Structure probing data (DMS and 2A3) for a 177-nucleotide construct. For 2A3 the reverse transcriptase was SuperScript II with manganese. Source: RMDB library TTRDES, as collected in RNAgym. The DMS profile rests on 5,076 reads.
RNA sequence: GGGAACGACUCGAGUAGAGUCGAAAAGAUAUGGACGAUAAUGAGGGAGCUGGUGAUCGGAAACGAUCACUCAGCUUUGAUCUCAAUCGUCCUAAGUCAAAACUGCAGCCAGUUCGCUGGCUGCAGAUCAGUGAAAAUUGUUCGCAAUUUUCACUGAAAAAGAAACAACAACAACAAC
Reactivity to DMS in 0.01 (KOAc 150mM, MgCl2 10mM, bicine 150mM(pH8.5), 24C), signal-to-noise 2, nucleotides 027 to 126: g000a010u010a030u000g000g000a020c000g000a010u000a060a120u010g000a030g000g000g000a010g040c000u010g000g010u000g000a000u000c000g020g000a020a010a030c000g010a000u000c000a010c010u020c040a020g020c000u010u000u010g000a030u000c000u000c000a090a020u000c010g000u000c000c000u000a010a070g000u010c000a090a100a150a230c010u000g010c000a000g010c000c000a000g000u000u010c300g020c010u010g010g000c000u010g000c000a000g000a020
Reactivity to 2A3 in 0.01 (KOAc 150mM, MgCl2 10mM, bicine 150mM(pH8.5), 24C), signal-to-noise 3, nucleotides 027 to 126: g000a010u010a020u080g000g000a010c010g000a000u070a150a300u300g000a000g000g060g030a030g000c000u010g020g010u000g010a000u000c000g000g010a020a010a000c000g010a010u010c010a020c020u160c010a000g000c010u030u060u020g000a010u000c000u010c060a120a050u020c000g000u000c010c000u000a000a010g010u010c000a000a010a160a190c010u010g000c000a000g000c000c000a010g020u100u120c220g120c200u010g030g010c000u000g020c000a000g000a000